RNA sequence: GGGAACGACUCGAGUAGAGUCGAAAACAAGCUCUCAAAGUACACACAUCCUCUAUGAAGGUCGGCCUGAAGAUCACCUAUGGAAACACGACAGGGAUGCUCGACGUGUUUGUAAACGGAGUUACGCUGCUUUAAUGCGGUUCGCCGCAUUAAAGCAAAAAGAAACAACAACAACAAC
Reactivity to 2A3 in 0.01 (KOAc 150mM, MgCl2 10mM, bicine 150mM(pH8.5), 24C), signal-to-noise 1, nucleotides 027 to 126: c040a010a010g060c010u050c040u090c100a060a050a110g020u090a010c040a000c010a000c000a070u030c010c010u000c000u040a070u090g050a040a020g040g000u030c030g030g020c020c010u030g060a050a010g030a050u060c040a040c070c010u060a050u090g120g040a110a050a000c030a010c020g030a010c040a040g000g000g100a090u100g090c000u020c060g070a020c020g000u030g040u030u100u050g190u110a000a000a000c050g020g020a030g000u000u010a060c070g050c080
Reactivity to DMS in 0.01 (KOAc 150mM, MgCl2 10mM, bicine 150mM(pH8.5), 24C), signal-to-noise 2, nucleotides 027 to 126: c190a140a140g020c040u000c000u010c060a050a110a150g020u000a070c050a040c190a110c160a090u010c070c020u000c030u000a070u020g000a180a090g030g010u000c020g010g040c050c060u000g010a050a050g000a090u000c090a060c020c040u000a180u000g040g000a100a020a040c050a010c040g000a090c110a070g000g020g000a140u010g040c040u000c030g040a140c030g020u000g010u000u000u000g010u000a010a090a070c180g000g000a050g000u000u020a110c150g000c120
The record gives the reactivity of an RNA of 177 nucleotides to 2A3 and DMS. It was measured as part of the RMDB library OK2TST. Values cover nucleotides 27 to 126. The 2A3 profile rests on 1,096 reads.